RNA sequence: GGGAACGACUCGAGUAGAGUCGAAAACAAUCACGCACGACGUUAUUGCAACGGGGCAACACCAAGAUGAAUGAUCUGAAAGACGAUCUAAAGCGUCAAAUUAGCGACCUGUUGGACCGCAGGUACAACCAGAUUAUCAGCGGCACUUUGCCUGUAGCAUGCUUUGCAUCUUCGGAUGCAAAGCAUGAAAAGAAACAACAACAACAAC
Reactivity to 2A3 in 0.01 (KOAc 150mM, MgCl2 10mM, bicine 150mM(pH8.5), 24C), signal-to-noise 3, nucleotides 027 to 156: c020a020a030u060c060a040c010g040c040a180c200g300a080c010g040u020u050a040u040u120g000c060a080a120c080g000g030g000g000c020a010a040c020a040c090c020a040a010g030a090u060g040a090a080u080g010a000u010c020u010g060a030a030a030g020a010c050g000a000u050c090u260a040a120a080g040c010g000u020c000a000a060a220u120u110a060g130c080g090a010c000c010u010g040u040u040g090g070a060c020c070g040c030a020g010g000u010a030c020a010a100c010c020a000g010a070u120u000a000u040c030a010g010c050g010g000c060a030c120u030u060u090g020c010c000u040g060u050a020g060
Reactivity to DMS in 0.01 (KOAc 150mM, MgCl2 10mM, bicine 150mM(pH8.5), 24C), signal-to-noise 1, nucleotides 027 to 156: c000a110a060u000c110a160c040g040c080a100c060g030a160c080g000u000u000a070u010u030g020c000a090a130c070g010g000g010g010c000a070a060c070a130c010c000a160a130g000a110u000g030a060a140u010g000a060u010c000u000g000a170a150a210g000a130c060g010a020u010c010u010a080a070a070g000c030g020u000c050a020a080a130u020u010a050g000c140g060a030c070c000u080g000u030u030g000g000a090c050c050g040c110a110g010g000u000a110c090a010a110c030c040a070g030a110u000u010a110u020c120a080g050c020g010g010c010a040c050u000u010u000g000c000c000u000g060u000a090g030